[RMDB]
RNA sequence: GGGAACGACUCGAGUAGAGUCGAAAACGCCGGCCGGGGAGACGCCGACGACGCCCGCCGGCAACGUACCGGCAACGCUUGACGAACGUCCGGCUUUGCUGCUGCCGCCGCGAGAGCAGCCGGCAACCCUAAACCAAAGAUUCGUCUUUGGUUUAGGAAAAGAAACAACAACAACAAC
Reactivity to 2A3 in 0.01 (KOAc 150mM, MgCl2 10mM, bicine 150mM(pH8.5), 24C), signal-to-noise 5, nucleotides 027 to 126: c050g010c010c010g010g010c140c030g010g000g050g030a130g040a030c050g040c110c060g050a050c040g020a030c060g110c010c040c000g000c010c000g000g000c000a010a010c020g000u030a050c020c010g020g000c010a020a020c030g000c030u020u040g020a020c020g070a300a140c150g070u020c010c000g000g000c000u020u030u040g000c010u020g010c020u040g020c000c020g030c020c020g050c050g010a040g020a010g070c010a010g000c010c010g010g000c000a020a070c010
Reactivity to DMS in 0.01 (KOAc 150mM, MgCl2 10mM, bicine 150mM(pH8.5), 24C), signal-to-noise 6, nucleotides 027 to 126: c170g020c020c010g000g010c060c050g020g010g010g010a180g010a150c140g000c020c000g000a060c090g010a170c130g000c040c050c010g000c020c020g000g000c000a020a030c130g010u000a110c110c010g000g010c010a040a040c060g000c030u000u000g010a050c050g010a150a130c170g000u000c020c040g010g000c010u000u000u000g010c020u000g010c100u010g000c030c030g000c050c050g010c050g000a150g000a120g010c020a060g010c030c020g010g000c010a080a070c140